[RMDB]
RNA sequence: GGGAACGACUCGAGUAGAGUCGAAAACGUACGUGGAGACACGUACGACGAGACUUCGGUCUCGAAUCGCAUGAACGCGGGCCAUGCGCGCGCGAGGCGUCGGUGGUCGGCGAGCCCACGGACGCAAAAACUCGCGCGUAAAUAAAUAGCCUGCGAAAGUCCUGAUAUAUUUCGAUAUAUCAGGACUAAAAGAAACAACAACAACAAC
Reactivity to 2A3 in 0.01 (KOAc 150mM, MgCl2 10mM, bicine 150mM(pH8.5), 24C), signal-to-noise 3, nucleotides 027 to 156: c010g010u000a000c000g000u010g000g020a050g020a040c000a010c010g000u000a000c000g000a020c010g000a000g000a000c020u130u190c300g090g000u000c010u010c000g000a010a110u080c010g000c000a000u000g030a250a080c000g000c000g000g010g000c000c000a010u000g000c010g010c010g020c000g000c010g010a000g020g000c010g010u000c060g170g010u010g000g010u010c030g070g080c150g030a020g010c000c010c000a000c050g050g000a000c010g000c020a040a070a040a090a090c000u000c000g000c010g000c000g000u000a000a000a010u090a000a010a020u090a010g010c000c000u000g010c000g000a020a000
Reactivity to DMS in 0.01 (KOAc 150mM, MgCl2 10mM, bicine 150mM(pH8.5), 24C), signal-to-noise 1, nucleotides 027 to 156: c030g040u010a000c000g000u010g000g020a280g000a270c040a020c000g040u000a000c010g000a160c070g000a130g010a010c000u000u020c210g100g030u000c000u000c000g040a010a040u000c050g010c000a050u010g000a070a100c000g000c030g000g040g050c060c030a040u000g000c080g010c060g000c030g030c010g010a030g000g030c000g020u000c040g000g000u000g050g010u000c040g000g060c110g050a220g020c250c010c000a030c020g000g000a040c020g030c180a000a000a030a050a160c020u000c000g030c000g010c010g000u000a030a110a050u020a080a120a060u000a060g000c020c000u000g000c030g000a040a160